[RMDB]
RNA sequence: GGGAACGACUCGAGUAGAGUCGAAAAGAUUCGGCGGCCCUGUCAUGAGGCCGAACCGAAGGCACGUACCCCUUCGAAUGGCGUCGGGGAGUCAGCGGCUAUAUAUGCGCCUAAUGCUGGCAUCCGGGAGAACCCUCAUCCUUCGGGAUGAGGGUAACACACCAUCGUACUUCGGUACGAUGGUGUGAAAAGAAACAACAACAACAAC
Reactivity to DMS in 0.01 (KOAc 150mM, MgCl2 10mM, bicine 150mM(pH8.5), 24C), signal-to-noise 1, nucleotides 027 to 156: g030a200u000u000c000g050g010c020g040g000c000c000c010u010g000u000c210a120u020g050a070g020g050c000c000g020a000a040c000c010g000a030a080g010g020c040a100c010g010u000a300c020c030c010c020u010u010c040g020a160a110u000g020g000c000g000u020c070g000g000g010g010a100g040u000c020a060g020c020g010g030c050u000a120u010a140u000a130u000g030c100g000c000c040u020a110a080u000g010c020u000g000g040c000a030u020c000c000g080g000g000a200g000a100a150c020c000c020u000c000a000u000c000c000u010u000c300g120g050g030a020u000g080a010g040g000g000u000a010a070
Reactivity to 2A3 in 0.01 (KOAc 150mM, MgCl2 10mM, bicine 150mM(pH8.5), 24C), signal-to-noise 2, nucleotides 027 to 156: g050a060u010u000c060g000g000c010g010g000c000c000c000u120g160u160c200a180u130g040a070g030g020c000c000g000a000a000c000c010g010a000a000g080g010c050a000c070g140u130a060c000c000c000c000u000u140c030g120a180a080u150g090g010c020g050u010c000g040g000g000g010a050g000u000c000a000g030c000g010g010c080u080a090u030a000u010a020u300g040c080g030c000c000u100a160a030u290g000c000u000g010g000c010a130u010c020c020g000g030g000a070g030a010a010c000c000c000u010c020a000u010c000c010u080u100c180g160g000g000a000u000g000a000g000g000g000u000a000a000